[RMDB]
RNA sequence: GGGAACGACUCGAGUAGAGUCGAAAAGUAGCAAUAUGGAAUAUUUAUUUAGUUAUAGGUGCACUUGUUUAGGUAUUUACCAGGCCUUUGAGUGUUCCUGCUCCAUACUUUGACCUUGUAAGUACUCAACCCAUCCUAUCUUCGGAUAGGAUGGGUUAAAAGAAACAACAACAACAAC
Reactivity to DMS in 0.01 (KOAc 150mM, MgCl2 10mM, bicine 150mM(pH8.5), 24C), signal-to-noise 1, nucleotides 027 to 126: g030u000a140g000c050a080a130u000a030u000g000g000a050a120u010a060u000u000u010a070u000u000u010a170g000u000u010a080u010a030g010g030u000g000c020a020c010u000u000g020u010u010u010a030g000g000u000a050u000u000u010a080c210c190a130g010g000c010c000u000u020u020g000a020g010u010g000u010u000c000c010u000g000c180u000c020c040a060u000a020c130u000u000u000g000a130c080c020u010u000g040u020a020a070g010u010a050c050u000c150